[RMDB]
RNA sequence: GGGAACGACUCGAGUAGAGUCGAAAAGAUAUGGAUGUGAGCAAGUGCUGCAUAUUCGGAAACGAAUGGGCAGUUUCGAUGAUGACCUCACAUCCUAAGUCAAAAGCGGCUCGUUCGCGAGCCGCAACUACCACACUUGGUUCGCCAAGUGUGGUAGAAAAGAAACAACAACAACAAC
Reactivity to DMS in 0.01 (KOAc 150mM, MgCl2 10mM, bicine 150mM(pH8.5), 24C), signal-to-noise 2, nucleotides 027 to 126: g000a010u000a190u020g000g000a020u000g030u030g010a010g040c090a060a250g040u000g010c000u010g040c000a030u020a040u000u000c000g020g000a030a030a130c000g020a010a010u000g020g000g010c000a030g010u000u000u000c190g020a240u000g060a150u000g000a230c300c010u010c010a010c000a000u000c000c000u000a010a080g020u010c050a070a070a100a120g000c010g000g020c020u000c010g060u000u000c160g000c030g000a020g000c000c030g010c010a010a060
Reactivity to 2A3 in 0.01 (KOAc 150mM, MgCl2 10mM, bicine 150mM(pH8.5), 24C), signal-to-noise 2, nucleotides 027 to 126: g010a000u030a010u100g000g000a000u020g000u000g000a030g000c060a130a220g100u130g200c010u010g000c010a000u030a010u070u030c000g070g000a040a040a020c010g010a010a010u010g020g050g000c010a020g000u140u200u140c060g020a100u300g080a090u100g050a080c010c010u000c000a000c030a010u000c010c000u010a020a010g030u010c040a100a000a090a070g010c010g020g010c010u000c000g030u160u180c300g040c020g150a000g020c000c000g020c000a000a000
Structure probing data (DMS and 2A3) for a 177-nucleotide construct.
For DMS, 945 sequencing reads were counted.
DMS adducts were read by reverse transcription with MarathonRT.
Values cover nucleotides 27 to 126.
It was measured as part of the RMDB library TTRDEL.